[RMDB]
RNA sequence: GGGAACGACUCGAGUAGAGUCGAAAACAGUCAUCAUAUCAGUAGACUGAUGGAUUGAGAGAUGAAGGGCGAGAGGUUUGUCCUGGUCCACGCAAGGCAGAUAGGGGAGAUAGUGCUUCUCUUAUGAUAAGCUCCUCUUGUUCGCAAGAGGAGCUUAAAAAGAAACAACAACAACAAC
Reactivity to DMS in 0.01 (KOAc 150mM, MgCl2 10mM, bicine 150mM(pH8.5), 24C), signal-to-noise 2, nucleotides 027 to 126: c030a050g070u020c000a080u040c030a100u060a130u020c080a040g010u020a080g010a180c070u020g030a030u000g010g010a030u010u030g020a130g000a090g000a040u040g040a110a120g000g000g000c000g030a080g020a040g000g010u030u080u000g030u000c000c070u000g000g020u020c080c050a140c080g060c120a020a080g000g000c060a080g000a100u040a050g000g060g000g000a100g020a120u020a120g020u020g000c020u010u000c060u000c000u090u000a100u040g000a180
Reactivity to 2A3 in 0.01 (KOAc 150mM, MgCl2 10mM, bicine 150mM(pH8.5), 24C), signal-to-noise 1, nucleotides 027 to 126: c020a000g000u080c000a110u000c000a000u250a010u300c010a000g110u150a090g050a150c090u090g110a000u080g010g070a000u000u190g080a060g000a020g000a070u130g040a140a060g000g000g040c000g000a120g060a090g190g080u000u020u050g040u180c010c000u080g000g080u000c000c000a020c000g230c050a000a090g060g000c000a000g010a140u060a080g050g000g000g150a000g000a000u270a000g080u020g080c000u070u000c000u040c000u030u130a060u100g040a010
Structure probing data (DMS and 2A3) for a 177-nucleotide construct. The reactions ran in a buffer of 150 mM KOAc, 10 mM MgCl2 and 150 mM bicine (pH 8.5), at 24 C. For 2A3 the reverse transcriptase was SuperScript II with manganese. The data come from the RNA Mapping Database (RMDB), library RFM100.